[RMDB]
RNA sequence: GGGAACGACUCGAGUAGAGUCGAAAACCGUUAACGUUCGCGUUAACGGAAAAAAACCUUUGUGUGUCCCACACUCCGCUCGCUCCCAUUGGGAGCGAGAACUACGGAAUGUGGGAGCACACUCUGGUAAAAACCAAUUAUCUUCGGAUAAUUGGAAUGUGUCUGAUGAAUUCGUUCAUCAGACACAAAAAGAAACAACAACAACAAC
Reactivity to 2A3 in 0.01 (KOAc 150mM, MgCl2 10mM, bicine 150mM(pH8.5), 24C), signal-to-noise 1, nucleotides 027 to 156: c010c000g000u010u000a010a000c010g020u030u080c260g010c000g140u000u000a000a000c000g000g000a260a030a000a000a000a030a000c000c010u010u000u000g010u010g000u020g030u040c000c040c000a000c000a000c010u000c000c000g080c020u000c010g000c000u000c010c040c120a300u160u300g010g000g000a000g000c000g010a000g010a000a000c060u250a050c000g000g000a000a000u010g000u000g000g000g020a000g000c000a000c000a000c000u000c010u000g050g080u090a140a130a040a000a040c050c020a000a030u050u000a000u000c020u020u060c200g110g010a000u000a000a000u000u010g010g060a040a060

Conditions: 150 mM KOAc, 10 mM MgCl2 and 150 mM bicine (pH 8.5), 24 C.
Chemical mapping of a 207-nucleotide RNA with 2A3.